[RMDB]
The data come from the RNA Mapping Database (RMDB), library OK1LIB. Chemical mapping of a 177-nucleotide RNA with 2A3 and DMS. Conditions: 150 mM KOAc, 10 mM MgCl2 and 150 mM bicine (pH 8.5), 24 C. The DMS profile rests on 3,679 reads.
RNA sequence: GGGAACGACUCGAGUAGAGUCGAAAAGUUUUCACUGACGAGAUGGCACACUUUGACAGAGAGCGGAUUCCUGAGAGAGUGGUACACGCAAAAGGAGCAGGUGCUUUUGGAUACUUUGAGGUCACCCAGUGAUUACCGAAUUCGUUCGGUAAUCACUAAAAGAAACAACAACAACAAC
Reactivity to 2A3 in 0.01 (KOAc 150mM, MgCl2 10mM, bicine 150mM(pH8.5), 24C), signal-to-noise 5, nucleotides 027 to 126: g020u040u000u070u070c120a120c040u060g050a030c030g010a010g020a150u060g090g000c020a010c010a000c060u050u090u080g040a050c060a050g120a010g020a010g090c080g060g060a110u120u040c020c020u060g010a090g000a020g000a020g060u090g030g030u090a040c110a000c100g070c040a020a090a020a050g040g000a070g000c030a020g000g030u050g030c000u050u020u030u030g090g000a040u060a080c010u010u020u190g040a010g040g030u000c020a050c030c000c000
Reactivity to DMS in 0.01 (KOAc 150mM, MgCl2 10mM, bicine 150mM(pH8.5), 24C), signal-to-noise 3, nucleotides 027 to 126: g000u010u000u030u000c030a040c040u010g000a110c030g010a090g000a070u010g010g020c080a090c060a070c050u010u000u010g000a120c060a010g000a110g010a120g020c090g020g000a130u020u030c030c000u000g000a090g000a070g000a130g030u050g010g000u030a050c130a040c030g010c120a010a050a150a100g010g010a070g020c070a080g040g030u000g000c020u000u000u040u020g010g000a090u000a030c020u000u000u010g020a100g000g000u020c030a050c000c030c010